[RMDB]
RNA sequence: GGGAACGACUCGAGUAGAGUCGAAAAUCAUUGGUCCAGAGGGGAGAUAGGUUCCUGUGAUUUUUCCUUCUUCUCUAUAGAAUAAAUGAAAAACCUCUAACAGUAAAGUUCGCUUUACUGUUAGAGGCUAUGAAAACACGUUCGCGUGUUUUCAUAGAAAAGAAACAACAACAACAAC
Reactivity to DMS in 0.01 (KOAc 150mM, MgCl2 10mM, bicine 150mM(pH8.5), 24C), signal-to-noise 1, nucleotides 027 to 126: u000c010a030u000u000g020g000u000c020c020a110g000a060g000g010g000g010a050g000a030u000a040g020g000u010u000c010c020u020g000u000g000a060u000u010u000u010u000c020c000u000u000c020u000u000c020u000c040u010a150u010a060g000a050a120u010a080a040a040u000g000a070a140a130a110a260c020c000u000c000u000a000a000c000a000g000u000a020a010a020g010u000u020c300g000c000u000u000u000a000c000u010g000u000u000a010g010a010g000g000
Reactivity to 2A3 in 0.01 (KOAc 150mM, MgCl2 10mM, bicine 150mM(pH8.5), 24C), signal-to-noise 3, nucleotides 027 to 126: u040c000a000u010u110g000g020u050c020c020a060g030a060g110g000g010g020a050g010a070u120a100g000g050u070u070c000c000u040g020u030g060a040u010u050u050u060u080c000c000u020u070c010u090u000c010u000c020u040a130u070a180g020a060a060u120a210a100a080u120g070a030a120a050a130a100c010c000u010c000u010a000a000c000a010g000u010a000a000a000g010u050u050c080g050c030u000u000u000a000c000u000g000u000u000a000g000a000g000g000
This 177-nucleotide RNA was probed chemically with DMS and 2A3. 2A3 adducts were read by reverse transcription with SuperScript II with manganese. The data come from the RNA Mapping Database (RMDB), library RFMREP. For DMS, 1,131 sequencing reads were counted. For DMS the reverse transcriptase was MarathonRT. Conditions: 150 mM KOAc, 10 mM MgCl2 and 150 mM bicine (pH 8.5), 24 C.